[RMDB]
RNA sequence: GGGAACGACUCGAGUAGAGUCGAAAACAUAAACGCUUCGGCGUUUAUGAAAUAAAAUCAGCGGUAAGCUCGCGUAAAAUAUAACCGCUGAACGCGAGCUUAAAACGGGACAGUUCGCUGUCCCGAAUCCACAGCUAAUGUUCGCAUUAGCUGUGGAAAAAGAAACAACAACAACAAC
Reactivity to 2A3 in 0.01 (KOAc 150mM, MgCl2 10mM, bicine 150mM(pH8.5), 24C), signal-to-noise 1, nucleotides 027 to 126: c000a000u020a020a010a000c000g020c010u050u080c220g130g000c030g000u010u000u010a010u010g000a020a000a010u090a010a050a010a080u090c040a010g020c000g110g030u040a020a020g000c010u010c020g000c010g010u020a010a100a150a040u260a020u010a100a030c040c000g030c060u030g020a010a000c010g020c010g030a010g000c000u000u030a050a060a030a020c020g000g000g000a010c000a000g000u060u120c190g010c140u000g000u000c000c000c000g000a010a040
Reactivity to DMS in 0.01 (KOAc 150mM, MgCl2 10mM, bicine 150mM(pH8.5), 24C), signal-to-noise 1, nucleotides 027 to 126: c000a010u000a000a000a000c000g020c000u010u020c240g070g010c000g050u000u000u010a010u000g000a070a090a040u010a050a090a110a110u020c100a090g020c030g010g000u000a020a030g010c010u000c000g010c000g020u000a050a020a060a080u000a100u000a080a130c060c060g030c030u000g000a140a030c020g020c000g000a030g010c000u000u000a020a040a110a210c010g000g000g000a020c020a020g020u000u020c240g000c010u010g000u000c000c000c060g000a010a000